Record summary:
Structure probing data (DMS) for a 177-nucleotide construct. DMS adducts were read by reverse transcription with MarathonRT. It was measured as part of the RMDB library OK2TST.
RNA sequence: GGGAACGACUCGAGUAGAGUCGAAAAGUGGUCACGGGUAGCUCUGGCAUGGUUUUCGCUGAACAGCGUCUUACUGUUGGCUCUAAUAAUGUUGCUUUGCGUUAUUUCAAACAUCAUCCCCCCACGCCCUUGUUCUCACGUUCGCGUGAGAACAAGGAAAAGAAACAACAACAACAAC
Reactivity to DMS in 0.01 (KOAc 150mM, MgCl2 10mM, bicine 150mM(pH8.5), 24C), signal-to-noise 1, nucleotides 027 to 126: g000u000g000g010u010c050a060c180g000g000g020u000a030g020c030u000c050u000g010g060c020a090u000g000g000u020u020u040u020c100g000c020u000g000a110a100c110a010g000c050g020u010c170u030u010a040c030u010g020u010u000g020g040c040u000c090u030a060a060u000a100a100u000g030u010u010g000c060u010u000u010g030c140g010u010u000a090u010u000u000c020a100a060a040c110a040u010c000a060u000c000c010c000c070c030c030a090c170g010c040